An RNA of 207 nucleotides, treated with 2A3 and DMS and read out base by base.
[RMDB]
RNA sequence: GGGAACGACUCGAGUAGAGUCGAAAACAAUCGGGAUAAGGGGACGAACGCUGCUGGCGGUGUAAUCGGACCACGAAAAACCAACCACCAGAGAUGAGUGUGGUAACUGCAUCGAGCAGUGUCCUGGACGCGGGUUCAAGUCCCGCCAUCUCCACCAGACUAUACCGAAGUUCGCUUCGGUAUAGUCAAAAGAAACAACAACAACAAC
Reactivity to 2A3 in 0.01 (KOAc 150mM, MgCl2 10mM, bicine 150mM(pH8.5), 24C), signal-to-noise 4, nucleotides 027 to 156: c050a030a080u170c100g040g010g010a040u060a110a070g030g040g010g010a020c060g060a120a040c040g020c020u020g000c020u060g130g080c020g010g000u010g010u020a060a070u100c080g010g010a040c040c050a080c080g050a070a030a020a000a000c030c010a020a040c030c020a020c010c030a040g040a000g000a140u140g030a090g140u200g020u010g040g000u020a030a030c050u010g010c000a030u060c080g020a010g000c000a000g000u000g020u090c010c010u030g020g060a050c080g000c010g000g040g020u080u170c030a020a030g070u030c000c000c000g000c010c000a040u000c010u000c010c000a050c010c000a020
Reactivity to DMS in 0.01 (KOAc 150mM, MgCl2 10mM, bicine 150mM(pH8.5), 24C), signal-to-noise 1, nucleotides 027 to 156: c050a110a120u000c050g000g010g000a160u000a120a180g000g000g020g000a080c040g020a020a070c080g000c010u010g000c000u000g000g060c030g000g000u000g020u000a010a160u060c110g000g000a210c060c050a070c050g000a010a070a040a180a090c040c010a050a080c020c020a030c010c060a080g010a130g010a190u000g000a110g000u000g010u020g010g020u000a000a010c020u000g010c000a060u000c080g010a100g060c010a040g010u000g040u010c010c040u000g030g020a050c060g000c020g000g000g000u010u000c150a110a220g000u000c000c000c000g020c020c040a030u000c030u000c000c010a040c020c010a150
The DMS profile rests on 2,053 reads.